[RMDB]
RNA sequence: GGGAACGACUCGAGUAGAGUCGAAAAGCGCUGGACCAUGUACAAGUCUGUUGAAAAGCAGCAUCAUUGAAGGUGAAAAUCCUGUAGAUGAUAUGGACUACCAGUGCAUUUGUGAUACGGUUUCUAAGGAGCUAGUACUAUUCGUAGUACUAGCUCCAAAAGAAACAACAACAACAAC
Reactivity to DMS in 0.01 (KOAc 150mM, MgCl2 10mM, bicine 150mM(pH8.5), 24C), signal-to-noise 2, nucleotides 027 to 126: g030c020g020c000u010g010g010a100c010c000a010u000g020u020a080c160a040a120g030u000c000u000g000u010u000g000a070a140a170a070g020c000a030g010c140a120u000c010a020u000u000g000a130a070g000g030u020g000a090a050a180a050u050c010c040u000g000u030a230g040a010u000g010a050u000a030u000g010g000a120c100u000a050c030c000a020g020u010g020c000a040u010u000u000g000u040g000a090u000a200c300g000g010u000u000u000c000u040a100a300
Reactivity to 2A3 in 0.01 (KOAc 150mM, MgCl2 10mM, bicine 150mM(pH8.5), 24C), signal-to-noise 1, nucleotides 027 to 126: g000c000g040c000u000g030g000a040c000c000a050u050g050u090a080c010a080a090g020u000c000u030g180u130u240g150a210a140a000a000g000c000a000g000c010a000u000c000a000u010u010g030a060a000g010g000u010g000a010a010a010a010u140c000c000u010g080u150a020g000a000u000g030a000u000a000u030g030g040a060c060u120a070c010c000a000g000u000g000c000a000u030u000u190g080u000g010a060u040a100c210g000g000u000u000u090c000u000a070a070
The data come from the RNA Mapping Database (RMDB), libraries RFM100 and RFMREP. An RNA of 177 nucleotides, treated with DMS and 2A3 and read out base by base. For 2A3, 431 sequencing reads were counted. The reactions ran in a buffer of 150 mM KOAc, 10 mM MgCl2 and 150 mM bicine (pH 8.5), at 24 C.